[RMDB]
RNA sequence: GGGAACGACUCGAGUAGAGUCGAAAAUUGAAUAUAAGGUUCAUACCCAUUCCCAUUAGCUCCUGAACGAGUAGUUUGGUUGCAUAUGGCAUAACCUUCAUUUCCACACUAUCCUCUUGACAGUUUAAUAAAUCCUUCCUUUCGAGGAAGGAUUUAUAAAAGAAACAACAACAACAAC
Reactivity to 2A3 in 0.01 (KOAc 150mM, MgCl2 10mM, bicine 150mM(pH8.5), 24C), signal-to-noise 5, nucleotides 027 to 126: u060u030g020a050a010u140a070u050a220a100g190g000u020u030c070a010u070a130c000c000c010a020u050u060c000c010c000a020u040u140a050g020c000u030c020c020u030g060a090a030c040g010a030g090u100a020g030u100u050u060g050g000u020u070g000c030a060u070a090u220g060g000c050a040u050a100a040c000c000u040u030c020a030u010u030u030c030c020a040c000a000c070u040a050u050c000c010u090c010u040u020g040a030c030a070g030u060u050u070a030
Reactivity to DMS in 0.01 (KOAc 150mM, MgCl2 10mM, bicine 150mM(pH8.5), 24C), signal-to-noise 3, nucleotides 027 to 126: u020u000g010a050a020u010a040u040a130a080g020g010u000u010c060a020u000a150c010c000c030a270u040u030c050c000c000a140u020u010a210g000c000u000c070c010u000g030a060a050c060g000a070g000u020a060g000u000u010u010g010g010u000u010g020c060a100u010a070u040g020g030c080a040u020a070a060c040c010u000u020c090a060u020u020u010c050c010a070c130a030c100u010a060u000c010c000u000c040u000u000g010a030c120a050g000u000u000u000a070
Source: RMDB library OK1LIB, as collected in RNAgym. This 177-nucleotide RNA was probed chemically with 2A3 and DMS. For 2A3 the reverse transcriptase was SuperScript II with manganese. The 2A3 profile rests on 3,387 reads. The RNA was probed in 150 mM KOAc, 10 mM MgCl2 and 150 mM bicine (pH 8.5) at 24 C.